[RMDB]
RNA sequence: GGGAACGACUCGAGUAGAGUCGAAAAGGAUGAUCUGGACCCGGCCAGUAAUCCGAAUUAGUACCGGGAUUGCAUCGUCGAGCCGUCAGGGGCGAAGACGAGAACCUGAAAGCACGAAGCACCGGGCGGUGCGAGUGCGAGAUAUAACGCCCAACAAAAUCCCAUACGUAUUCGUACGUAUGGGAUUAAAAGAAACAACAACAACAAC
Reactivity to DMS in 0.01 (KOAc 150mM, MgCl2 10mM, bicine 150mM(pH8.5), 24C), signal-to-noise 2, nucleotides 027 to 156: g040g000a110u010g010a110u000c070u000g000g000a050c030c050c080g000g040c020c000a140g000u000a080a000u000c010c040g050a040a100u000u000a090g040u000a120c020c010g010g010g010a200u000u010g000c080a120u010c060g000u000c000g000a290g010c000c020g000u010c120a170g000g010g000g010c030g020a070a270g020a090c010g010a100g000a070a050c040c020u000g030a120a140a220g040c010a040c020g000a240a300g020c000a040c000c020g050g000g020c080g020g040u020g020c000g000a270g000u000g050c000g000a100g000a120u010a150u000a110a140c020g000c010c010c000a020a130c240a100a130
Reactivity to 2A3 in 0.01 (KOAc 150mM, MgCl2 10mM, bicine 150mM(pH8.5), 24C), signal-to-noise 2, nucleotides 027 to 156: g000g000a000u010g000a010u160c000u020g020g000a030c000c000c000g040g000c000c020a020g020u040a040a070u000c030c010g000a030a020u160u060a130g020u040a070c010c020g000g000g010a000u030u230g050c050a120u010c000g010u000c010g030a040g040c010c020g150u200c170a100g190g050g040g000c000g060a040a000g000a000c000g010a000g000a000a040c010c030u030g020a100a040a030g030c000a000c010g060a110a010g000c010a010c030c020g120g100g050c140g060g000u000g000c000g000a010g000u020g000c000g000a000g020a000u220a010u010a120a020c030g000c000c040c010a040a050c050a040a250